RNA sequence: GGGAACGACUCGAGUAGAGUCGAAAAGGCAUGAAGACGAUGCCGAACGAGCGCAAGCGCGUGACGACGUUCGGUGGCGAAAACGUCGCGCCGGACACGGUGCAUGUCGUGAUCCAGGACGACACGAGCGAUCAGUAUUCGCUGUACGCGUUCGGCCAUUAUUUCAUCCGUUCGCGGAUGAAAUAAUAAAAGAAACAACAACAACAAC
Reactivity to 2A3 in 0.01 (KOAc 150mM, MgCl2 10mM, bicine 150mM(pH8.5), 24C), signal-to-noise 5, nucleotides 027 to 156: g030g020c030a050u060g100a130a060g130a080c110g050a020u080g000c000c000g000a010a010c000g010a010g020c000g000c050a130a100g030c020g000c010g050u070g080a040c030g010a000c010g010u000u000c030g050g120u060g020g030c100g040a050a050a000a050c040g030u000c000g000c030g000c060c030g000g000a010c020a010c020g040g050u150g070c160a090u300g020u040c000g000u000g010a100u000c000c010a050g010g030a020c000g000a010c000a010c020g020a000g000c010g030a230u020c040a030g010u030a130u070u080c010g000c010u050g020u050a020c050g000c000g000u000u000c000g010g040c020c000
Reactivity to DMS in 0.01 (KOAc 150mM, MgCl2 10mM, bicine 150mM(pH8.5), 24C), signal-to-noise 3, nucleotides 027 to 156: g010g030c050a060u010g000a060a080g020a120c050g010a150u000g000c020c010g020a030a020c010g010a110g010c000g050c060a130a140g030c070g010c090g020u000g000a080c030g010a190c020g020u000u000c040g020g010u000g030g000c020g000a160a050a130a120c080g040u000c010g000c000g000c010c010g040g000a090c040a070c040g010g030u010g020c160a140u010g030u000c000g040u000g000a180u000c020c030a110g000g000a070c020g020a050c000a050c000g000a060g000c020g010a100u000c010a210g000u010a140u010u000c030g010c010u000g000u000a050c050g010c000g010u010u000c010g030g000c030c110